[RMDB]
RNA sequence: GGGAACGACUCGAGUAGAGUCGAAAAGAUAUGGAUGUGGCAGCUUUUGACGCCUGGAUAUUCGGAAACGAAUAUAGAGGGCGAUAAGCUGCACAUCCUAAGUCAAACGCGGAGUUCGCUCCGCGAACCCGCACAAACUCUUCGGAGUUUGUGCGGGAAAAGAAACAACAACAACAAC
Reactivity to 2A3 in 0.01 (KOAc 150mM, MgCl2 10mM, bicine 150mM(pH8.5), 24C), signal-to-noise 2, nucleotides 027 to 126: g020a000u070a010u140g000g020a010u010g000u130g300g290c000a000g000c020u130u110u180u300g300a190c170g030c010c000u080g120g050a060u010a010u010u000c000g030g000a020a050a050c000g010a000a000u010a000u080a080g300a300g040g010g000c090g030a120u070a190a000g000c000u010g000c000a000c000a000u010c010c000u000a000a010g000u000c040a070a100a130c050g000c000g030g020a010g000u110u190c290g020c160u000c000c010g000c000g000a000a000
Reactivity to DMS in 0.01 (KOAc 150mM, MgCl2 10mM, bicine 150mM(pH8.5), 24C), signal-to-noise 1, nucleotides 027 to 126: g000a000u000a300u000g000g000a010u000g030u010g040g000c010a010g000c000u010u010u000u000g010a220c110g060c000c000u000g030g000a060u000a000u000u000c010g000g010a050a140a160c000g040a040a000u000a000u000a080g020a240g010g010g010c000g030a090u030a010a020g020c000u000g000c010a050c000a000u000c000c010u010a010a100g010u030c010a060a180a300c030g000c010g000g000a020g010u000u040c300g010c010u010c060c000g040c000g000a010a060
Chemical mapping of a 177-nucleotide RNA with 2A3 and DMS. The RNA was probed in 150 mM KOAc, 10 mM MgCl2 and 150 mM bicine (pH 8.5) at 24 C. Reactivities are given for positions 27 through 126.